[RMDB]
RNA sequence: GGGAACGACUCGAGUAGAGUCGAAAAUGAUCGAGAGAUCUAACGAUGUACGCGAGUCAAUAGCACAGACUCGAGCGAAAGCUCGGUCGAAAGACCGCGUACAUCGGUCGGCAAGUGUCUAGUCAAAAUGCGGCUAUAUCUUCGGAUAUAGCCGCAUAAAAGAAACAACAACAACAAC
Reactivity to DMS in 0.01 (KOAc 150mM, MgCl2 10mM, bicine 150mM(pH8.5), 24C), signal-to-noise 1, nucleotides 027 to 126: u030g000a000u000c010g010a280g000a190g020a010u010c000u020a090a090c000g020a010u010g000u000a000c000g020c020g020a050g020u000c000a050a080u010a140g070c110a090c300a210g000a000c000u010c000g030a020g020c010g010a140a050a190g000c000u000c000g000g000u000c000g000a030a080a080g000a000c000c000g030c000g000u000a010c000a000u000c000g000g000u000c090g020g010c020a050a060g020u000g000u010c050u000a120g000u020c050a090a140a130